[RMDB]
RNA sequence: GGGAACGACUCGAGUAGAGUCGAAAAUUUUCAAACAUUACCUCUGUGACUAAAGCAACAGAAGAACUUCUAAGAACUGGGAGUAAAAAUACUGAAGGAAGCUGCUUUACCAAUACUGAAGGAGAUCCAUGAGAAAUGAAUUCGUUCAUUUCUCAUGAAAAGAAACAACAACAACAAC
Reactivity to 2A3 in 0.01 (KOAc 150mM, MgCl2 10mM, bicine 150mM(pH8.5), 24C), signal-to-noise 4, nucleotides 027 to 126: u030u010u020u080c030a050a080a060c020a080u060u230a070c010c010u000c020u040g050u030g060a070c050u080a080a040a030g010c010a000a090c010a050g020a060a010g020a080a050c010u010u010c010u060a110a130g050a200a110c140u080g010g030g010a030g050u070a040a050a050a060a050u110a100c050u050g040a050a040g090g040a040a030g030c050u010g000c000u050u020u010a050c020c000a070a070u090a140c040u060g050a110a010g020g030a030g000a030u030c020
Reactivity to DMS in 0.01 (KOAc 150mM, MgCl2 10mM, bicine 150mM(pH8.5), 24C), signal-to-noise 5, nucleotides 027 to 126: u000u000u010u000c060a130a090a140c090a080u020u010a100c040c020u000c030u000g000u010g000a130c140u000a050a080a090g010c080a050a060c050a040g010a080a100g010a110a070c030u000u000c030u000a080a130g010a110a210c150u000g010g000g000a040g010u010a010a080a110a070a070u010a070c050u000g010a070a080g020g010a070a090g010c040u010g010c020u000u000u000a060c080c040a060a080u010a140c110u000g010a090a030g010g000a110g000a090u000c110

Structure probing data (2A3 and DMS) for a 177-nucleotide construct. 2A3 adducts were read by reverse transcription with SuperScript II with manganese. The 2A3 profile rests on 5,250 reads. 2A3 is a SHAPE reagent: it acylates the 2'-hydroxyl of flexible nucleotides of all four kinds. Values cover nucleotides 27 to 126. The data come from the RNA Mapping Database (RMDB), library OK2TRN. The reactions ran in a buffer of 150 mM KOAc, 10 mM MgCl2 and 150 mM bicine (pH 8.5), at 24 C.